This 207-nucleotide RNA was probed chemically with DMS and 2A3.
Reactivities are given for positions 27 through 156.
The reactions ran in a buffer of 150 mM KOAc, 10 mM MgCl2 and 150 mM bicine (pH 8.5), at 24 C.
The 2A3 profile rests on 7,480 reads.
[RMDB]
RNA sequence: GGGAACGACUCGAGUAGAGUCGAAAAUAGAUCAAGACAUUGGCCAUACCUUAUUUAAUGUUCCUACCACAGUUUUAAGAUAUGGAUUUCAUGUGUUGCAUUUUAUAACCCAUGCAUUUGCUACUGAUAGCGUGCAGUGUUACACGCCACAUAUGCACAUUAAGUGCUCAUUCGUGAGCACUUAAUGAAAAGAAACAACAACAACAAC
Reactivity to DMS in 0.01 (KOAc 150mM, MgCl2 10mM, bicine 150mM(pH8.5), 24C), signal-to-noise 4, nucleotides 027 to 156: u000a050g000a040u000c030a040a050g010a040c040a070u000u000g020g000c000c000a070u000a030c020c000u010u000a030u000u000u000a030a040u000g010u000u000c000c010u000a130c020c020a030c050a040g020u000u000u000u000a010a040g010a020u000a020u000g010g010a080u000u000u010c030a050u000g030u010g010u000u000g020c050a040u000u000u000u000a040u000a080a100c020c010c010a110u000g010c020a100u000u000u000g010c020u000a110c070u000g010a100u000a030g030c010g050u000g010c010a060g000u000g020u000u000a040c010a010c010g020c010c020a030c040a060u000a060u000g020c060a190
Reactivity to 2A3 in 0.01 (KOAc 150mM, MgCl2 10mM, bicine 150mM(pH8.5), 24C), signal-to-noise 6, nucleotides 027 to 156: u110a010g020a020u020c020a020a000g050a030c020a040u080u150g030g010c000c000a010u020a020c010c010u070u070a080u110u110u060a150a060u070g020u060u090c040c070u090a080c050c050a040c010a030g010u020u010u030u040a020a010g010a000u020a010u020g020g010a060u020u100u080c020a010u020g000u000g050u020u010g010c030a030u000u050u040u040a110u050a060a050c010c000c010a020u020g000c010a030u000u030u130g030c010u030a070c040u100g070a170u090a070g000c000g000u010g000c010a040g030u010g020u130u060a020c030a000c020g020c030c000a030c020a020u090a030u090g010c020a000